[RMDB]
Chemical mapping of a 177-nucleotide RNA with 2A3 and DMS.
RNA sequence: GGGAACGACUCGAGUAGAGUCGAAAAGGCGGUUUAGGCUCCGGUCUCGAACCCGAGCGACCGAACUCCGUUGUAUCUGUGCAAGAGUAGGUGUGUAGCACGGUACGAAGCCGGUUCUUGUGGUAACUAGGGUUAAUUCUUUCGAGAAUUAACCCUAAAAAGAAACAACAACAACAAC
Reactivity to 2A3 in 0.01 (KOAc 150mM, MgCl2 10mM, bicine 150mM(pH8.5), 24C), signal-to-noise 2, nucleotides 027 to 126: g080g000c000g040g080u050u090u130a160g050g000c030u020c030c050g020g010u000c000u030c120g040a110a030c020c010c000g000a000g000c030g020a000c010c010g010a030a050c030u030c040c000g040u040u040g020u020a080u040c100u090g040u040g010c000a070a080g030a050g200u130a050g020g090u060g030u080g000u150a000g000c000a000c080g020g000u040a010c030g040a000a000g040c030c000g000g030u040u000c030u000u100g040u050g040g050u100a050a030c080
Reactivity to DMS in 0.01 (KOAc 150mM, MgCl2 10mM, bicine 150mM(pH8.5), 24C), signal-to-noise 3, nucleotides 027 to 126: g000g010c070g010g010u000u010u030a160g040g000c040u010c020c260g000g000u000c030u040c110g000a150a040c030c010c180g020a050g040c010g000a050c010c000g000a040a090c030u000c020c090g020u010u020g030u000a060u050c070u000g000u000g000c010a080a080g010a060g000u030a070g000g000u020g000u030g010u010a070g000c000a120c080g010g010u020a040c070g000a100a170g000c010c010g010g000u010u000c050u000u000g030u000g000g000u020a070a040c180

DMS adducts were read by reverse transcription with MarathonRT. Conditions: 150 mM KOAc, 10 mM MgCl2 and 150 mM bicine (pH 8.5), 24 C. It was measured as part of the RMDB library OK1LIB.